[RMDB]
RNA sequence: GGGAACGACUCGAGUAGAGUCGAAAAUGUGUGCUCGAGAGCCUCCCUGUCCGACAGAGCUUUUAGAUCUUCUGAUCUUUCCCUGGAGGAUAUCGCUUUUGCUUCAAGCGAUUCUCGGAAUAAUUAAAUUCAAAAGACAAUUCGUUGUCUUUUGAAUAAAAGAAACAACAACAACAAC
Reactivity to 2A3 in 0.01 (KOAc 150mM, MgCl2 10mM, bicine 150mM(pH8.5), 24C), signal-to-noise 4, nucleotides 027 to 126: u150g090u010g020u050g000c020u020c060g110a090g000a010g050c000c010u000c020c000c030u030g040u030c010c000g020a020c010a040g060a030g040c000u040u040u030u030a010g010a010u010c010u300u020c140u300g010a010u000c000u000u020u000c010c000c000u000g070g010a030g020g000a030u030a000u060c010g000c000u050u070u080u210g080c040u100u110c060a020a000g000c000g020a030u070u010c020u010c010g040g090a050a090u160a100a050u210u110a150a140
Reactivity to DMS in 0.01 (KOAc 150mM, MgCl2 10mM, bicine 150mM(pH8.5), 24C), signal-to-noise 7, nucleotides 027 to 126: u010g020u000g020u000g010c040u000c020g000a090g010a170g010c050c040u000c010c030c090u010g000u000c020c010g010a120c090a100g010a070g010c250u010u000u000u000a020g000a010u000c000u000u010c300u010g010a020u000c000u000u000u000c010c000c010u000g020g010a110g000g010a050u000a020u000c010g010c000u000u000u000u010g010c120u000u000c100a070a020g010c000g010a020u000u000c020u000c010g010g010a110a080u010a070a090u000u010a050a100